[RMDB]
Chemical mapping of a 177-nucleotide RNA with DMS and 2A3. For 2A3, 2,463 sequencing reads were counted.
RNA sequence: GGGAACGACUCGAGUAGAGUCGAAAACGUCGUGAACUAGCGACAAUGCCGUAGAUCUAUCGUUAUCUAACCGAAACAUCGUGACUAGUCGUAGAAUAGAACCAGGAGUGGACGCUGACAAACAAAGACGGGGUCUAAAAUUCGUUUUAGGCCCCGUAAAAGAAACAACAACAACAAC
Reactivity to DMS in 0.01 (KOAc 150mM, MgCl2 10mM, bicine 150mM(pH8.5), 24C), signal-to-noise 5, nucleotides 027 to 126: c210g000u010c010g030u000g020a140a100c130u030a140g020c020g000a030c030a090a060u010g020c030c040g000u000a090g000a060u010c050u000a100u020c070g010u000u010a050u020c030u010a090a080c130c040g000a090a070a110c140a070u010c060g000u000g010a060c070u000a060g010u010c030g000u000a070g010a090a090u010a070g010a090a090c070c060a040g000g010a080g000u000g000g010a030c050g000c050u020g000a050c060a040a090a100c140a050a090a120g000
Reactivity to 2A3 in 0.01 (KOAc 150mM, MgCl2 10mM, bicine 150mM(pH8.5), 24C), signal-to-noise 4, nucleotides 027 to 126: c050g010u020c010g030u050g060a110a020c080u030a090g000c000g010a000c020a020a030u090g000c000c020g020u080a030g020a060u010c010u030a090u030c070g060u070u080a050u010c060u060a100a060c020c010g040a050a030a010c050a060u080c020g040u020g030a040c030u010a050g020u050c010g050u020a010g050a160a060u110a060g020a080a030c090c050a040g030g030a070g060u050g040g000a010c010g010c010u020g020a050c050a050a110a000c050a010a090a000g050
DMS adducts were read by reverse transcription with MarathonRT.